[RMDB]
RNA sequence: GGGAACGACUCGAGUAGAGUCGAAAAGAUAUGGAGCCUACCACUACGCUUGGACCAGACAAUUCUGAUCAUAUCGGAAACGAUAUGAUCAGAAUUGUCUGCUAGCGUAGGUGGAGGCUCCUAAGUCCUAUUUCUUCAACUUCGGUUGAAGAAAUAGAAAAGAAACAACAACAACAAC
Reactivity to DMS in 0.01 (KOAc 150mM, MgCl2 10mM, bicine 150mM(pH8.5), 24C), signal-to-noise 3, nucleotides 027 to 126: g010a090u010a300u010g000g000a020g030c000c000u000a130c000c000a300c010u000a010c010g000c000u000u010g020g010a160c300c020a010g000a010c000a010a010u000u010c000u000g030a010u000c000a010u000a000u000c000g020g000a170a070a200c010g010a020u000a000u000g000a010u010c000a000g000a010a000u000u000g010u000c000u010g010c010u000a010g000c010g000u000a020g000g020u010g030g000a050g010g020c000u000c010c000u000a010a070g000u000c040